This 177-nucleotide RNA was probed chemically with 2A3 and DMS. Conditions: 150 mM KOAc, 10 mM MgCl2 and 150 mM bicine (pH 8.5), 24 C. DMS adducts were read by reverse transcription with MarathonRT. Source: RMDB library TTRDES, as collected in RNAgym. For 2A3, 3,616 sequencing reads were counted.

RNA sequence: GGGAACGACUCGAGUAGAGUCGAAAAAAAGAUAUGGAAACGUUAAGAGCGAAGAACUAUACCAGCAGCACUUCACUUCGGAAACGAAGUGAAAGGGUAUAGGGAGCUCAACGUUUCCUAAGUCAAACCAAAUAAGUACCUUCGGGUACUUAUUUGGAAAAGAAACAACAACAACAAC
Reactivity to 2A3 in 0.01 (KOAc 150mM, MgCl2 10mM, bicine 150mM(pH8.5), 24C), signal-to-noise 2, nucleotides 027 to 126: a000a000a020g000a010u010a010u040g010g000a000a000a000c010g010u090u230a300a130g000a000g010c020g190a300a030g000a100a000c000u020a000u020a010c010c020a100g300c100a020g180c050a150c040u000u020c000a010c020u010u000c000g020g000a000a020a000c010g010a000a010g000u000g000a020a010a010g040g000g010u010a010u010a000g100g020g000a010g000c000u010c000a000a000c000g000u020u000u000c000c000u000a000a000g010u000c040a040a050a140
Reactivity to DMS in 0.01 (KOAc 150mM, MgCl2 10mM, bicine 150mM(pH8.5), 24C), signal-to-noise 2, nucleotides 027 to 126: a110a080a080g020a000u000a050u020g000g000a000a000a020c010g010u000u000a180a080g000a010g000c000g000a090a150g030a110a150c000u000a000u000a010c000c010a170g070c300a160g030c300a190c180u000u000c010a010c000u000u000c000g050g010a030a020a020c000g000a060a000g010u000g000a000a010a050g000g020g020u010a000u000a010g030g000g010a030g030c000u000c000a050a000c010g010u000u000u000c000c000u000a000a040g000u000c030a090a160a170